[RMDB]
Structure probing data (2A3) for a 207-nucleotide construct. The 2A3 profile rests on 775 reads. Conditions: 150 mM KOAc, 10 mM MgCl2 and 150 mM bicine (pH 8.5), 24 C.
RNA sequence: GGGAACGACUCGAGUAGAGUCGAAAAAGCACUGGUACGAUACGUCGUACCAGUGCAGUCGUUGGGAUUGAACGCAAUUAAAUACAUGUGUGACGUGUAUUUGCGAACGACGUAAUUAUUUUUCAAAAUCACGCUAUCGUGUUCGCACGAUAGCGAAGGAUCAGGAGAAGUUCGCUUCUCCUGAUCCAAAAGAAACAACAACAACAAC
Reactivity to 2A3 in 0.01 (KOAc 150mM, MgCl2 10mM, bicine 150mM(pH8.5), 24C), signal-to-noise 2, nucleotides 027 to 156: a000g010c000a000c000u000g000g010u010a000c000g000a000u020a010c210g280u030c000g000u000a000c000c000a000g000u010g070c010a000g010u020c000g000u030u030g040g140g040a150u150u100g060a140a050c000g000c040a020a020u110u170a050a150a010u040a000c000a020u000g070u030g150u240g200a050c020g000u000g000u000a000u000u030u040g000c010g000a020a000c000g010a000c030g020u040a000a120u160u190a120u080u150u010u010u070c150a080a090a080a050u190c100a050c120g010c000u000a000u000c000g000u000g050u020u020c120g010c090a000c000g020a000u000a000g000c000g000a000a000